[RMDB]
RNA sequence: GGGAACGACUCGAGUAGAGUCGAAAAGAAAGAGCCUGAAUACGGAGAACCGUAACGCAUGACCGAAUAUUCAGCCCAGUUCACGACGUAAGUCGUGCGCCCGAGUCUGCAUCUGGGCGCUGGGGUCACGUACAUGCGUCAGGCAGGAUGUAGAGAAGUAAUUUUAGCUGUUCGCAGCUAAAAUUACAAAAGAAACAACAACAACAAC
Reactivity to 2A3 in 0.01 (KOAc 150mM, MgCl2 10mM, bicine 150mM(pH8.5), 24C), signal-to-noise 3, nucleotides 027 to 156: g070a020a060a010g110a010g010c010c000u030g040a100a070u060a010c000g020g020a150g110a300a220c020c000g000u000a020a020c000g000c000a000u010g010a040c040c060g060a160a060u150a120u210u190c070a120g040c000c000c000a020g000u150u130c020a010c020g010a000c000g040u080a120a100g000u000c000g000u010g000c030g000c000c000c000g000a010g080u030c030u070g030c020a050u010c030u080g000g000g000c010g010c000u010g000g010g020g020u090c040a010c080g020u070a080c000a000u000g000c000g020u020c010a000g000g000c000a000g070g020a020u050g010u090a020g010a010g020a200a000
Reactivity to DMS in 0.01 (KOAc 150mM, MgCl2 10mM, bicine 150mM(pH8.5), 24C), signal-to-noise 2, nucleotides 027 to 156: g000a160a070a120g000a170g000c010c020u000g020a150a240u010a020c000g030g010a150g010a100a140c020c000g000u000a080a190c000g020c000a050u000g030a170c020c040g020a100a130u000a150u000u000c100a180g010c010c000c010a110g000u000u000c020a030c000g040a010c000g010u020a120a200g030u000c010g000u000g020c040g000c000c020c030g010a100g000u000c050u000g030c100a050u000c030u020g020g000g000c000g040c010u000g030g000g060g030u000c090a020c070g050u000a100c010a050u000g010c000g020u000c000a070g000g040c000a040g010g000a070u000g020u000a050g010a220g010a170a300